[RMDB]
RNA sequence: GGGAACGACUCGAGUAGAGUCGAAAAGCGUACUACGGAGGCGGACAUAGGACAUGAGCUGGACCCGCUUUCCCAAAUAGGAAAGCGCUAACAGCUCAACAGCCUAUGUGCCAUCCGUAUCGCAAAACUGAGGACCAGGUUCGCCUGGUCCUCAGAACACUUAGAAAGACUUCGGUCUUUCUAAGUGAAAAGAAACAACAACAACAAC
Reactivity to 2A3 in 0.01 (KOAc 150mM, MgCl2 10mM, bicine 150mM(pH8.5), 24C), signal-to-noise 2, nucleotides 027 to 156: g020c020g010u060a070c030u000a000c060g020g020a020g020g020c090g030g010a020c000a000u000a000g010g000a010c060a250u040g000a000g000c010u020g000g020a010c000c000c020g000c000u030u010u010c000c000c000a300a300a070u190a050g000g000a000a010a010g010c020g000c000u040a100a000c000a020g000c000u010c000a000a000c000a000g080c000c000u000a000u010g000u020g020c000c000a180u010c000c010g010u010a010u070c010g020c000a010a020a030a060c010u000g000a010g000g000a000c010c000a010g000g040u050u100c150g070c070c000u000g000g000u010c000c000u000c000a000g000a000a000
Reactivity to DMS in 0.01 (KOAc 150mM, MgCl2 10mM, bicine 150mM(pH8.5), 24C), signal-to-noise 1, nucleotides 027 to 156: g000c030g070u000a060c170u010a010c010g010g000a070g000g020c080g030g010a120c000a020u000a000g000g000a030c070a300u010g000a040g000c000u010g000g000a130c280c270c010g000c020u010u010u000c090c000c000a090a200a230u010a040g000g010a020a010a010g000c000g020c000u000a040a300c010a000g000c000u000c000a030a040c040a240g000c000c010u010a000u000g010u000g040c000c000a080u000c000c020g070u000a030u000c000g000c020a080a070a120a140c020u000g000a040g010g020a050c010c010a000g000g010u000u010c300g000c000c020u000g000g000u000c010c000u010c000a020g000a060a190